[RMDB]
An RNA of 207 nucleotides, treated with 2A3 and read out base by base. The reactions ran in a buffer of 150 mM KOAc, 10 mM MgCl2 and 150 mM bicine (pH 8.5), at 24 C. Source: RMDB library OK3TST, as collected in RNAgym.
RNA sequence: GGGAACGACUCGAGUAGAGUCGAAAACGAAGACUCCAUUGGACUUUCAAAAAUGGUUUUCAUCAAUAACAUUGCUUUGGCUCAAAUAAAGAAGUGAGUAUUUGCAAGCCUUCUUUUCCUUCAUUGGUCACUAGAAUGGGCAUUGCCUCAGAUACCAAUGCCACUUCGCGUUCGCGCGAAGUGGCAUAAAAGAAACAACAACAACAAC
Reactivity to 2A3 in 0.01 (KOAc 150mM, MgCl2 10mM, bicine 150mM(pH8.5), 24C), signal-to-noise 2, nucleotides 027 to 156: c030g020a010a020g060a040c030u040c060c010a060u030u030g000g040a060c060u140u210u120c170a090a080a000a000a000u070g010g000u070u030u100u230c080a130u130c080a070a120u250a170a010c010a080u030u080g010c070u080u050u120g050g010c000u010c060a070a090a040u150a080a110a020g050a110a020g090u040g070a020g000u040a070u030u090u100g030c030a050a050g000c030c000u040u030c000u000u110u050u220c000c000u080u090c080a130u150u170g020g000u030c020a010c050u030a050g030a130a080u050g010g000g050c040a140u010u230g050c000c000u010c060a000g040a040u050a010c010c000a000